[RMDB]
RNA sequence: GGGAACGACUCGAGUAGAGUCGAAAAUAUCAGUUUCCGUGGGAGUGAGAAGCAUGGGGAAAUUUAGCCCAACUCAUUGCUUCGGUAGGCUGGCGAAAAGAUCAUGUAAAGUUCGCUUUACAUGAUCCCUAAAGGUGCUGUUCGCAGCACCUUUAGGAAAAGAAACAACAACAACAAC
Reactivity to DMS in 0.01 (KOAc 150mM, MgCl2 10mM, bicine 150mM(pH8.5), 24C), signal-to-noise 3, nucleotides 027 to 126: u000a100u010c020a060g010u000u000u000c000c010g010u000g000g010g010a050g040u010g010a040g010a200a100g040c220a100u000g000g010g010g000a080a080a190u000u020u000a070g010c000c000c000a060a120c020u000c000a000u000u000g020c000u000u000c020g000g000u010a010g000g010c000u000g020g000c300g000a080a070a060a110g000a020u000c000a000u000g000u000a000a010a010g010u000u010c220g010c000u000u000u000a000c000a000u000g000a010u000c000
Reactivity to 2A3 in 0.01 (KOAc 150mM, MgCl2 10mM, bicine 150mM(pH8.5), 24C), signal-to-noise 2, nucleotides 027 to 126: u100a000u030c000a000g010u000u070u000c000c010g000u030g000g010g030a040g000u040g010a040g030a130a090g090c140a150u120g010g000g020g060a030a160a130u220u260u150a150g020c000c000c000a040a060c000u010c010a000u000u050g060c000u000u010c000g000g000u010a000g060g000c010u010g030g000c050g040a000a060a060a070g000a000u000c000a000u000g000u000a010a000a020g010u030u100c270g000c000u000u020u000a020c000a000u000g000a000u010c010